[RMDB]
RNA sequence: GGGAACGACUCGAGUAGAGUCGAAAAGAAGAUGCCCUGCAAGUGCCCCCACUCUGGAAGCAGUCUCCCUAGCCGUCCGUCUUCACUCAGGUGCCUAGUCUUGUCCAUUCUCCUCCUAAAGGCUGGGGCUCAGCAGAUGAUUCGUCAUCUGCUGAGCAAAAGAAACAACAACAACAAC
Reactivity to DMS in 0.01 (KOAc 150mM, MgCl2 10mM, bicine 150mM(pH8.5), 24C), signal-to-noise 1, nucleotides 027 to 126: g000a100a080g000a140u000g000c010c040c020u000g030c120a080a080g020u020g010c020c000c010c070c070a060c060u000c120u010g030g020a060a060g030c070a080g020u000c050u000c040c020c050u000a030g000c020c040g010u020c050c010g000u000c030u000u010c030a030c050u000c040a070g000g000u010g010c040c060u000a060g010u000c000u020u000g010u010c030c010a110u020u000c060u000c000c000u000c030c020u000a050a100a130g000g000c000u000g000g020g000